[RMDB]
RNA sequence: GGGAACGACUCGAGUAGAGUCGAAAACCACUGCUCGAGGACGUCCUCCCUGUCUCCUCGGUUCUUCUUCGAUCCGGACCGGCUCAUCUCGGCAAAGGGCGGCAGUCCUCAGUACUCUUACUCUUUCGACGGAAUCAGUUCGCUGAUUCCAAAAGAAACAACAACAACAAC
Reactivity to DMS in 0.01 (KOAc 150mM, MgCl2 10mM, bicine 150mM(pH8.5), 24C), signal-to-noise 7, nucleotides 027 to 129: c090c020a140c080u040g010c030u000c080g040a050g000g050a000c070g060u040c010c000u060c000c000c000u040g020u000c060u020c030c030u030c010g000g000u040u020c040u010u000c040u040u030c130g020a150u030c090c000g000g000a090c030c030g000g000c040u000c030a100u050c090u000c070g050g000c100a040a090a040g040g020g020c100g020g090c120a030g030u020c010c000u000c030a060g030u050a090c060u040c060u040u050a130c010u040c090u020u050u040c040g000a130c190
Reactivity to 2A3 in 0.01 (KOAc 150mM, MgCl2 10mM, bicine 150mM(pH8.5), 24C), signal-to-noise 9, nucleotides 027 to 129: c010c010a060c060u040g000c000u040c120g000a000g010g030a060c000g060u080c000c010u030c000c000c010u030g030u020c050u040c040c010u060c010g030g000u020u010c020u150u020c010u080u150c120g100a110u040c030c030g010g030a040c010c000g020g000c030u040c060a160u040c050u040c040g020g000c040a090a090a070g020g010g000c000g010g010c020a030g010u000c000c000u010c000a010g010u040a060c020u030c010u110u120a140c030u040c020u060u060u080c040g060a070c070

Chemical mapping of a 170-nucleotide RNA with DMS and 2A3. It was measured as part of the RMDB library 15KLIB. Values cover nucleotides 27 to 129. The DMS profile rests on 38,130 reads.